RNA sequence: GGGAACGACUCGAGUAGAGUCGAAAAUCAUCUGACCUGAGAGAGGUGACAUCCUCACUUUUCUAAGCUUGCAUUUUAUAUGUUAUGGCUUUGCUAUAUACCUCAGGUGAUGCACAUUGGCACAAAAGACUUAGGUUUAUAAACUGAGGAAGAAAGGGAGAACUAGUGUAUUCGUACACUAGUUCUCAAAAGAAACAACAACAACAAC
Reactivity to DMS in 0.01 (KOAc 150mM, MgCl2 10mM, bicine 150mM(pH8.5), 24C), signal-to-noise 3, nucleotides 027 to 156: u000c020a040u000c070u000g040a090c030c020u010g010a070g010a090g000a050g020g040u000g020a080c080a160u000c100c100u000c020a030c040u010u010u010u000c040u000a060a030g020c030u000u010g000c040a060u000u000u030u010a130u020a040u030g010u000u000a060u010g020g010c010u000u000u000g020c040u000a110u000a120u000a060c020c010u000c000a030g020g040u000g020a060u000g010c060a080c080a170u010u000g000g020c040a110c040a050a110a110a120g000a100c060u000u000a070g020g000u000u000u030a120u000a090a050a070c030u000g000a020g000g010a090a090g010a050a060a130g000g010
Reactivity to 2A3 in 0.01 (KOAc 150mM, MgCl2 10mM, bicine 150mM(pH8.5), 24C), signal-to-noise 7, nucleotides 027 to 156: u070c010a000u000c030u060g100a040c010c010u030g000a030g010a010g000a010g020g020u060g040a040c040a120u100c010c030u040c020a070c020u080u110u050u020c040u050a020a000g000c010u020u040g010c040a040u040u060u140u150a250u170a020u150g050u110u110a110u180g030g000c000u030u030u030g010c020u020a040u040a040u060a300c010c010u010c010a000g000g000u010g010a030u040g020c030a050c030a180u100u220g070g000c050a030c020a060a090a030a020g040a010c020u040u050a030g060g020u080u060u040a110u100a050a050a020c030u040g010a010g050g050a020a040g050a080a070a020g110g050